Structure probing data (DMS and 2A3) for a 177-nucleotide construct. Reactivities are given for positions 27 through 126. The 2A3 profile rests on 34,094 reads.
RNA sequence: GGGAACGACUCGAGUAGAGUCGAAAAGGCAUAUCAGGCUCGUCGAGGAACUGCGUGAAGGAAUCUUCAGUGAUCUCCUCGGGGCGUAGUGUUCCGACUGCGGAUCGACGAGCGAUCUCACGGACGGUACUUGAUUUCAAUUCGUUGAAAUCAAGUAAAAAGAAACAACAACAACAAC
Reactivity to DMS in 0.01 (KOAc 150mM, MgCl2 10mM, bicine 150mM(pH8.5), 24C), signal-to-noise 9, nucleotides 027 to 126: g010g010c100a090u010a080u000c120a140g010g010c000u000c010g010u000c000g010a050g010g010a070a070c020u000g010c020g020u000g010a140a060g010g010a060a050u000c000u000u000c300a130g010u000g000a020u000c160u000c010c010u000c090g010g010g010g010c010g010u000a040g010u010g010u000u000c000c010g000a170c150u000g010c050g010g020a150u000c000g000a040c020g000a030g010c010g000a020u000c040u000c040a110c110g000g010a090c140g010g000
Reactivity to 2A3 in 0.01 (KOAc 150mM, MgCl2 10mM, bicine 150mM(pH8.5), 24C), signal-to-noise 9, nucleotides 027 to 126: g050g020c070a050u090a050u220c080a070g200g000c000u000c010g020u010c000g020a050g040g080a090a050c010u020g010c020g060u110g110a090a020g020g010a030a020u020c010u130u090c100a300g190u070g130a010u010c050u010c160c000u020c030g030g010g060g000c010g010u050a050g040u020g080u130u020c010c020g030a080c110u200g040c050g040g010a050u010c000g010a010c000g010a000g000c000g000a010u000c020u010c010a040c050g100g030a020c040g040g040
For DMS the reverse transcriptase was MarathonRT. Source: RMDB library OK2TRN, as collected in RNAgym. For DMS, 44,683 sequencing reads were counted.